[RMDB]
RNA sequence: GGGAACGACUCGAGUAGAGUCGAAAAGAUAUGGACCUUCUAUGACAUCCUUGAAGUAACAUGAGCAUGUUAUUCGGAAACGAAUAACAUGCUCAUGUUAUGGAGAUGCAUAGAGAGGUCCUAAGUCCUAAGGAAAACACUUCGGUGUUUUCCUUAGAAAAGAAACAACAACAACAAC
Reactivity to DMS in 0.01 (KOAc 150mM, MgCl2 10mM, bicine 150mM(pH8.5), 24C), signal-to-noise 3, nucleotides 027 to 126: g000a090u010a270u010g000g000a020c000c000u000u000c000u000a010u000g010a270c000a010u010c000c300u000u020g020a180a190g000u000a000a020c000a000u000g000a010g030c000a000u000g000u000u000a010u000u000c000g010g000a130a080a220c010g020a020a010u000a010a000c000a000u000g000c000u010c000a000u000g000u000u000a000u000g010g000a060g000a010u000g010c010a000u000a010g000a060g020a020g020g000u000c000c000u000a010a050g010u000c040